[RMDB]
RNA sequence: GGGAACGACUCGAGUAGAGUCGAAAAGAUAUGGAUGUCGAAUAGGGAGAUACCUGUCGGAAACGACAGAAGUAUCGAGGAUCUAUCGACAUCCUAAGUCAAAGUUAGGCAGUUCGCUGCCUAACAAGUUGAAAGUGUUCUUCGGAACACUUUCAACAAAAGAAACAACAACAACAAC
Reactivity to 2A3 in 0.01 (KOAc 150mM, MgCl2 10mM, bicine 150mM(pH8.5), 24C), signal-to-noise 2, nucleotides 027 to 126: g000a000u040a000u110g000g000a000u010g020u000c010g010a070a090u040a100g070g030g050a300g000a040u000a010c010c000u000g000u000c030g000g030a050a010a020c010g020a000c000a000g080a200a140g040u000a000u000c000g010a040g010g100a140u020c000u000a030u020c000g000a000c000a000u040c010c000u000a000a000g000u010c060a190a000a050g010u000u000a000g000g000c020a010g000u030u090c260g100c220u000g000c000c010u000a000a000c000a000a030
Reactivity to DMS in 0.01 (KOAc 150mM, MgCl2 10mM, bicine 150mM(pH8.5), 24C), signal-to-noise 1, nucleotides 027 to 126: g000a010u000a200u030g010g000a010u000g000u000c000g030a040a050u010a000g000g050g040a140g000a030u000a010c000c000u000g000u000c000g000g000a070a040a070c000g000a020c010a000g000a140a080g000u010a000u000c000g020a090g010g000a080u000c000u000a030u000c010g010a020c000a000u000c000c000u000a000a040g000u000c010a070a150a190g010u000u000a000g000g000c000a010g030u010u010c270g000c020u000g000c000c000u000a000a000c000a070a090
Structure probing data (2A3 and DMS) for a 177-nucleotide construct. For DMS the reverse transcriptase was MarathonRT. The RNA was probed in 150 mM KOAc, 10 mM MgCl2 and 150 mM bicine (pH 8.5) at 24 C. For 2A3, 3,277 sequencing reads were counted.